Chemical mapping of a 170-nucleotide RNA with 2A3 and DMS. Conditions: 150 mM KOAc, 10 mM MgCl2 and 150 mM bicine (pH 8.5), 24 C. The data come from the RNA Mapping Database (RMDB), library 15KLIB. The 2A3 profile rests on 8,872 reads. Reactivities are given for positions 27 through 129.
RNA sequence: GGGAACGACUCGAGUAGAGUCGAAAAGUAACUGGCCUUUUUAAAGAUUGCUCUAGAGAAACUUCUGGCCUCUCACCUGCUUAUGCACCAACAUAUGUUAGUGUUGAUGACAAGUAUAAGACGAGUGUAAUCGAUCGGUUCGCCGAUCGAAAAAGAAACAACAACAACAAC
Reactivity to 2A3 in 0.01 (KOAc 150mM, MgCl2 10mM, bicine 150mM(pH8.5), 24C), signal-to-noise 6, nucleotides 027 to 129: g050u030a050a040c040u030g010g000c000c000u060u050u020u050u190a150a150a010g070a030u080u150g020c020u020c050u130a010g000a000g020a190a150a050c020u060u030c010u080g030g000c000c000u010c000u000c000a030c000c030u000g000c000u020u030a010u050g030c030a070c030c010a020a010c020a020u100a030u240g220u160u100a110g010u000g010u040u000g040a090u070g000a030c040a160a070g020u000a030u020a040a010g070a020c060g000a030g020u040g030u030a020a090
Reactivity to DMS in 0.01 (KOAc 150mM, MgCl2 10mM, bicine 150mM(pH8.5), 24C), signal-to-noise 4, nucleotides 027 to 129: g010u040a030a040c080u030g000g040c000c000u030u010u040u030u100a060a140a110g010a050u010u030g030c050u030c030u000a100g010a060g040a120a060a050c080u010u050c070u030g010g030c000c050u010c080u000c050a030c000c000u050g000c080u040u020a020u030g030c050a000c070c040a000a000c000a050u020a050u040g040u000u000a030g020u020g010u000u000g010a080u030g000a110c090a030a100g020u050a060u020a070a000g020a000c120g020a070g000u030g020u040a090a080